[RMDB]
RNA sequence: GGGAACGACUCGAGUAGAGUCGAAAAGAUAUGGAAGCGUAACAUCGUAGUCUUUGGAGCUUGGAUUUAUUGAAUCGGAAACGAUUCAAUUGUCAGCUCGACUACGUGGCUUCCUAAGUCAAACUCGCAUCGACCCCUUCGGGGGUCGAUGCGAGAAGAUGAGUGUUGAGUUCGCUCAACACUCAUCAAAAGAAACAACAACAACAAC
Reactivity to 2A3 in 0.01 (KOAc 150mM, MgCl2 10mM, bicine 150mM(pH8.5), 24C), signal-to-noise 1, nucleotides 027 to 156: g020a010u120a010u030g000g000a000a000g020c030g050u190a140a020c030a280u230c020g000u000a030g010u030c110u150u200u300g100g000a000g000c020u130u160g150g040a070u250u260u160a010u170u000g000a010a000u000c000g030g040a060a020a060c030g010a000u050u000c000a000a000u000u010g010u000c020a000g000c000u010c000g000a000c000u000a000c010g030u010g000g010c000u000u000c000c000u000a100a000g020u010c020a070a000a040c000u000c000g000c010a000u000c000g010a090c070c020c070c040u050u160c240g100g000g000g000g000u000c020g000a040u010g000c000g010a000g000a010a000